[RMDB]
RNA sequence: GGGAACGACUCGAGUAGAGUCGAAAAGUCGCUUAGCAAAAUGGAAACAAAUUUGCGCAGACGUACAAACGAUUAGUAACGAAGGCCAUAUAAGUCAAACGAAAGUGUAGCAACUUCUAUGCGAUGAAGAGUGUUUGCUGUUCGCAGCAGACACUCUAAAAGAAACAACAACAACAAC
Reactivity to 2A3 in 0.01 (KOAc 150mM, MgCl2 10mM, bicine 150mM(pH8.5), 24C), signal-to-noise 9, nucleotides 027 to 126: g030u020c010g000c040u080u110a040g020c050a020a040a030a070u130g070g080a080a100a060c060a040a150a140u040u030u040g030c050g000c030a030g020a100c020g030u070a030c070a030a140a000c030g090a100u120u170a070g090u080a090a010c070g030a080a030g050g000c020c010a030u060a000u030a210a060g060u080c080a140a070a030c070g080a100a020a070g050u070g010u080a030g040c020a020a040c000u040u000c010u030a040u080g020c020g040a040u070g070a050
Reactivity to DMS in 0.01 (KOAc 150mM, MgCl2 10mM, bicine 150mM(pH8.5), 24C), signal-to-noise 9, nucleotides 027 to 126: g010u000c010g010c040u010u020a160g010c100a030a030a060a150u020g010g000a140a100a120c070a030a090a120u000u000u000g000c040g000c100a080g000a090c040g020u020a050c090a080a110a100c120g010a120u030u030a090g010u010a050a060c060g010a110a090g000g000c030c020a040u000a040u030a040a110g010u010c070a070a100a060c080g000a060a050a060g000u000g010u010a080g010c120a070a040c050u000u010c030u000a050u000g000c040g000a050u010g000a070